The record gives the reactivity of an RNA of 177 nucleotides to 2A3 and DMS.
Values cover nucleotides 27 to 126.
For DMS the reverse transcriptase was MarathonRT.
Conditions: 150 mM KOAc, 10 mM MgCl2 and 150 mM bicine (pH 8.5), 24 C.
The data come from the RNA Mapping Database (RMDB), library M2PK50.
The 2A3 profile rests on 1,480 reads.
RNA sequence: GGGAACGACUCGAGUAGAGUCGAAAAGUCUCUAUCUUCGGAUAGAGACAAAUAUAAGUACGUCUUAGAGCUAGAUCAAUUAAUAUCGUCGACAUCGUAAAAAAAGAGGUAUGUUCGCAUACCUCAAGGUUACUUUAGACUUCGGUCUAAAGUAACCAAAAGAAACAACAACAACAAC
Reactivity to 2A3 in 0.01 (KOAc 150mM, MgCl2 10mM, bicine 150mM(pH8.5), 24C), signal-to-noise 2, nucleotides 027 to 126: g010u010c000u030c000u010a010u000c010u000u070c230g100g000a010u000a000g000a000g000a000c000a000a000a000u010a000u010a010a040g070u040a030c050g050u000c030u030u070a020g020a010g080c000u060a010g020a100u070c020a020a030u110u160a080a110u100a060u140c020g040u030c030g070a050c010a050u120c140g100u230a050a050a000a000a000a020a120g020a000g000g010u000a000u010g010u040u010c210g000c140a000u000a010c000c030u020c000a010a000
Reactivity to DMS in 0.01 (KOAc 150mM, MgCl2 10mM, bicine 150mM(pH8.5), 24C), signal-to-noise 1, nucleotides 027 to 126: g000u000c000u000c000u000a000u000c000u020u070c240g060g000a010u030a010g000a060g000a000c000a000a020a080u000a130u020a050a050g020u000a040c040g010u020c050u000u000a120g000a060g000c050u000a050g000a100u010c060a050a100u000u000a130a100u020a090u020c060g030u000c090g000a030c130a030u000c050g020u030a000a000a080a020a090a020a130g010a010g030g030u000a010u000g010u000u000c160g010c030a000u000a000c000c000u020c000a010a000